[RMDB]
RNA sequence: GGGAACGACUCGAGUAGAGUCGAAAAAGCGAUGAUACGUCAUCGCAACGAUUGCCUGAUCGUAAAACAGGAGAGGGCCGUGGCCGCGACCACGUAAAAAAGCGUAACGUGGUCUACGGACCACGAAAAAAGCGCGGAACGUUCGCGUUCCGCGCAAGAUUAGUUAUGUCUUCGGACAUAACUAAUCAAAAGAAACAACAACAACAAC
Reactivity to 2A3 in 0.01 (KOAc 150mM, MgCl2 10mM, bicine 150mM(pH8.5), 24C), signal-to-noise 3, nucleotides 027 to 156: a000g010c000g010a000u010g010a000u030a090c190g070u020c010a000u010c010g000c000a000a010c000g010a030u010u040g010c000c000u010g010a020u020c030g070u160a010a030a060a060c040a060g060g030a050g060a050g040g030g000c020c000g010u000g000g000c020c000g000c000g010a020c000c010a000c020g000u050a030a020a030a000a020a010g070c030g010u020a040a030c010g000u000g020g010u010c020u060a060c130g030g040a100c000c000a010c010g010a020a000a000a000a020a000g000c000g000c010g010g000a000a000c000g030u080u110c160g010c000g090u010u000c010c010g000c010g000c000a000a000

Structure probing data (2A3) for a 207-nucleotide construct.
Reactivities are rounded to 0.1 and cut off at 0 and 3.
2A3 adducts were read by reverse transcription with SuperScript II with manganese.
The RNA was probed in 150 mM KOAc, 10 mM MgCl2 and 150 mM bicine (pH 8.5) at 24 C.
High 2A3 reactivity points to a flexible backbone, as in loops and unpaired stretches.
The 2A3 profile rests on 3,577 reads.